[RMDB]
RNA sequence: GGGAACGACUCGAGUAGAGUCGAAAAUCAAGGACUUACAUAGAGUAUAUAUGCCAUACAAGUUUUAUUCCCUCCGUGAAAUCGGUAAAAAUAUAAAUAUAAAAGCACGUUCUAGUAACAAGAAAUUCACACUGGUAGUAUUCGUACUACCAGUGUGAAAAGAAACAACAACAACAAC
Reactivity to 2A3 in 0.01 (KOAc 150mM, MgCl2 10mM, bicine 150mM(pH8.5), 24C), signal-to-noise 1, nucleotides 027 to 126: u060c020a040a040g070g000a000c000u080u260a070c090a170u240a060g140a090g300u030a020u040a000u000a040u290g070c000c000a000u000a060c000a020a060g050u030u030u000u170a130u020u000c000c000c000u040c000c000g000u000g220a050a050a090u090c060g020g020u130a090a090a040a000a000u120a000u060a260a130a000u280a000u040a100a090a000a000g060c040a060c210g020u020u020c000u040a060g000u040a170a030c020a070a010g000a090a110a000u000u040